RNA sequence: GGGAACGACUCGAGUAGAGUCGAAAAAUGGCAGAGUCCUAGGCAUCACACAUCUUCGGGCGAUGCUGAAUCAAAUGGCGGGGCUAGGCAUCGCACCUCUAUCCGGUGUCAAAGCAAUGGCGCAGACCCUGAUUACAGGGUUCGCCCUGUAAUCAGGAAAAGAAACAACAACAACAAC
Reactivity to 2A3 in 0.01 (KOAc 150mM, MgCl2 10mM, bicine 150mM(pH8.5), 24C), signal-to-noise 2, nucleotides 027 to 126: a010u130g000g020c000a030g030a020g120u030c000c030u010a040g040g000c010a020u070c020a020c010a010c000a110u050c070u200u170c090g030g000g000c020g010a010u010g030c010u000g030a020a100u090c070a060a020a130u110g090g000c020g020g040g000g010c020u050a040g010g000c010a010u020c010g010c040a200c020c020u020c010u080a140u060c000c030g030g080u030g000u010c030a030a060a000g060c010a070a090u070g040g000c020g000c030a000g030a060c000
Reactivity to DMS in 0.01 (KOAc 150mM, MgCl2 10mM, bicine 150mM(pH8.5), 24C), signal-to-noise 2, nucleotides 027 to 126: a030u010g010g040c020a070g020a190g000u000c030c030u020a120g020g010c040a040u000c020a080c100a110c130a080u000c070u000u020c180g000g030g020c050g010a030u000g000c000u000g010a080a070u030c150a060a080a060u010g000g020c000g020g020g000g000c020u000a200g000g000c000a010u010c030g010c040a070c050c000u000c150u010a050u000c080c050g000g000u000g000u000c080a020a090a110g000c120a060a040u010g000g000c070g010c080a080g000a050c120
An RNA of 177 nucleotides, treated with 2A3 and DMS and read out base by base. The RNA was probed in 150 mM KOAc, 10 mM MgCl2 and 150 mM bicine (pH 8.5) at 24 C. It was measured as part of the RMDB library VIROID.